Background:
This 177-nucleotide RNA was probed chemically with 2A3 and DMS. The RNA was probed in 150 mM KOAc, 10 mM MgCl2 and 150 mM bicine (pH 8.5) at 24 C. Reactivities are given for positions 27 through 126. Reactivities are rounded to 0.1 and cut off at 0 and 3.

RNA sequence: GGGAACGACUCGAGUAGAGUCGAAAAAGUUUCUGAUGAAACUGACCUAAGACAGUAGGGGAGCAGUGCUCAUAAUAUUCCUACCGAGGCACAAAACGUCAUUAUAAAAUAACGUAUUGUACUUUCGAUCCAGUUUAUACUUCGGUAUAAACUGGAUAAAAGAAACAACAACAACAAC
Reactivity to 2A3 in 0.01 (KOAc 150mM, MgCl2 10mM, bicine 150mM(pH8.5), 24C), signal-to-noise 9, nucleotides 027 to 126: a000g020u020u010u000c050u150g300a270u250g000a020a010a020c010u020g060a060c000c010u030a110a030g070a060c070a050g020u010a000g000g010g010g010a010g000c130a100g150u060g220c010u000c020a010u030a050a010u070a090u290u300c000c000u000a010c000c000g010a020g010g010c020a010c010a040a060a050a010c020g020u030c050a050u060u200a120u100a190a170a070a040u120a040a000c020g000u020a030u030u060g010u020a030c030u090u110u060c030g020
Reactivity to DMS in 0.01 (KOAc 150mM, MgCl2 10mM, bicine 150mM(pH8.5), 24C), signal-to-noise 8, nucleotides 027 to 126: a020g000u000u000u000c000u020g010a200u040g000a010a010a010c000u000g000a140c010c000u000a070a110g010a090c190a120g010u000a010g000g010g000g000a020g020c010a170g010u030g010c000u000c010a020u010a010a010u020a090u030u010c010c000u000a010c010c000g000a020g000g010c050a000c000a000a010a080a010c010g010u000c050a030u000u010a190u050a110a070a050a030u000a060a010c010g020u000a090u000u000g010u000a040c010u000u020u020c050g010